[RMDB]
RNA sequence: GGGAACGACUCGAGUAGAGUCGAAAAAAGAUAUGGACGAGAGACAGCUGAUGACCAUGGGUUGAGUAUGGUCGGAAACGACCAUACAAGAUGAGCCCAUGCAAGGCUGUCCUCGUCCUAAGUCAAAGCACUCAUAUGACUUCGGUCAUAUGAGUGCAAAAGAAACAACAACAACAAC
Reactivity to DMS in 0.01 (KOAc 150mM, MgCl2 10mM, bicine 150mM(pH8.5), 24C), signal-to-noise 2, nucleotides 027 to 126: a130a140g000a040u000a030u010g000g000a000c010g000a030g000a160g000a020c000a000g020c000u000g020a030u010g010a180c300c020a000u000g000g010g050u000u010g010a220g010u000a020u000g010g010u000c010g000g030a020a020a040c000g010a010c000c000a010u000a000c000a020a100g000a160u000g010a010g000c000c000c000a000u000g000c010a070a000g000g040c000u010g000u000c000c010u000c000g000u010c000c000u000a000a030g000u000c000a120a150a170